[RMDB]
RNA sequence: GGGAACGACUCGAGUAGAGUCGAAAAUAUUUUACAAUUGGCUGAGACCAUUGAAAUCAUCUGUUCCACUCUUUAUUUUAUAAAUCUAUCUCUUCACUACUUAAACAUAUAUUGAGUGUCAGCUAUGUCCUAAACAGGGAUGCCUGCUAUAUCCUGGGACCCAAGGGUAAUUCGUUACCCUUGGGUCAAAAGAAACAACAACAACAAC
Reactivity to 2A3 in 0.01 (KOAc 150mM, MgCl2 10mM, bicine 150mM(pH8.5), 24C), signal-to-noise 1, nucleotides 027 to 156: u030a000u040u220u080u060a060c030a000a000u060u180g050g030c030u160g300a030g030a210c000c000a000u000u010g040a050a000a000u130c030a000u040c020u080g040u040u050c050c000a000c000u000c000u010u120u010a190u000u230u010u070a210u190a220a250a050u000c020u030a110u040c050u010c000u300u220c160a020c130u150a050c070u130u100a040a280a040c060a000u140a030u020a110u150u030g020a000g030u000g000u030c020a020g010c060u110a050u130g110u010c000c000u050a030a190a000c030a020g000g000g000a050u030g020c040c040u020g110c020u000a000u020a020u120c020c020u030g000g080